[RMDB]
RNA sequence: GGGAACGACUCGAGUAGAGUCGAAAACGCCCAGACGCAGAAGGCCUGUUUCUGUGAGGUCAACGCGCGUCUGCAGGUGGAGCAUGUGGUGACGGAGAUGACUGCCGAUGUCAACGUUCCGGCUGCAGAGUUAGGGAUACUUCGGUAUCCCUAACUCAAAAGAAACAACAACAACAAC
Reactivity to DMS in 0.01 (KOAc 150mM, MgCl2 10mM, bicine 150mM(pH8.5), 24C), signal-to-noise 3, nucleotides 027 to 126: c230g020c000c000c000a090g000a040c010g020c010a240g020a110a300g000g020c030c010u010g010u000u030u010c170u020g000u000g010a020g030g000u000c000a030a300c060g000c120g000c010g020u000c000u020g010c040a040g000g010u000g020g000a040g000c030a300u000g010u000g010g000u010g000a080c040g010g000a180g010a200u020g030a130c090u010g000c070c040g010a130u020g000u010c010a090a090c030g000u000u000c010c000g000g000c000u000g000c040a120
Reactivity to 2A3 in 0.01 (KOAc 150mM, MgCl2 10mM, bicine 150mM(pH8.5), 24C), signal-to-noise 3, nucleotides 027 to 126: c080g050c010c000c000a010g010a000c000g010c000a010g000a100a030g050g000c010c010u130g140u190u240u000c110u130g250u120g190a010g000g010u020c020a010a070c060g070c000g000c000g000u000c000u000g000c030a010g130g300u050g000g030a000g000c030a050u200g030u030g050g090u030g090a020c010g050g000a040g010a070u300g090a110c060u170g060c030c030g050a090u080g020u000c030a050a020c010g010u000u000c020c020g030g020c030u000g000c010a030
The record gives the reactivity of an RNA of 177 nucleotides to DMS and 2A3. The DMS profile rests on 1,720 reads. Conditions: 150 mM KOAc, 10 mM MgCl2 and 150 mM bicine (pH 8.5), 24 C.